[RMDB]
RNA sequence: GGGAACGACUCGAGUAGAGUCGAAAAAUAUCGAUUAGCCGAUGCUAAUGCAUAUAUGCUAUAUAAUCGCGAUGCGCUAGCAUAUAUUAGCUACGCGAUGCCGAUCGAUCGUAGCUACGGCGCCGCGACAGGCGCCUAUAUUCGUAUAGGCGCCUGUAAAAGAAACAACAACAACAAC
Reactivity to 2A3 in 0.01 (KOAc 150mM, MgCl2 10mM, bicine 150mM(pH8.5), 24C), signal-to-noise 2, nucleotides 027 to 126: a020u190a050u080c020g010a010u000u040a020g000c040c050g100a070u170g000c010u070a040a030u080g000c030a020u080a040u040a020u150g000c020u040a000u050a040u050a300a160u120c050g030c000g080a070u100g000c020g010c040u020a020g000c060a010u040a000u010a020u140u130a010g000c000u000a010c000g000c000g020a000u050g200c100c110g100a040u050c000g010a020u170c010g020u000a010g000c010u000a010c020g020g000c000g040c000c040g080c010g070
Reactivity to DMS in 0.01 (KOAc 150mM, MgCl2 10mM, bicine 150mM(pH8.5), 24C), signal-to-noise 3, nucleotides 027 to 126: a100u000a060u000c060g010a100u000u000a090g010c010c180g020a170u000g010c010u000a030a080u010g010c080a030u000a040u000a040u010g000c010u000a090u000a120u010a130a080u000c100g000c000g000a110u010g010c020g030c120u010a040g010c030a020u000a060u000a070u010u000a010g010c010u000a020c030g010c000g010a010u000g000c120c150g000a040u000c000g000a080u000c020g010u000a010g010c010u000a030c100g010g000c000g000c070c030g020c080g010